[RMDB]
RNA sequence: GGGAACGACUCGAGUAGAGUCGAAAAUAACCCGCAAGACGGGGCCAAAGACGGGGCUAAGGCAACCGCCGUCCCCCGUGAACCGGACGAAGCCGCGCUGGCCGCGAUGUCCAACCAGGAGCUGCUCGCCCUAUAGCUUAUUCGUAAGCUAUAGGGCAAAAGAAACAACAACAACAAC
Reactivity to DMS in 0.01 (KOAc 150mM, MgCl2 10mM, bicine 150mM(pH8.5), 24C), signal-to-noise 4, nucleotides 027 to 126: u010a140a150c010c000c010g020c190a130a110g010a100c020g000g000g020g000c300c050a060a090a090g020a020c020g030g000g010g010c070u030a080a140g060g000c040a060a100c210c180g000c010c020g000u000c190c000c010c040c030g020u010g010a070a070c160c070g000g000a050c060g000a130a110g020c060c020g010c050g020c070u000g020g020c040c060g010c070g000a070u010g010u000c010c040a160a100c150c070a090g010g000a080g000c020u000g010c030u000c110
Reactivity to 2A3 in 0.01 (KOAc 150mM, MgCl2 10mM, bicine 150mM(pH8.5), 24C), signal-to-noise 2, nucleotides 027 to 126: u010a030a110c010c000c010g030c050a020a040g100a030c000g000g030g040g000c050c050a090a080a030g060a010c020g000g010g030g000c020u080a100a020g050g000c050a130a160c090c120g050c030c000g020u020c000c020c000c000c010g000u010g010a030a030c010c040g050g040a030c020g080a040a040g040c000c010g030c010g030c070u090g060g000c020c030g060c020g050a070u130g050u010c020c000a010a010c020c010a040g030g040a070g050c020u040g010c010u020c070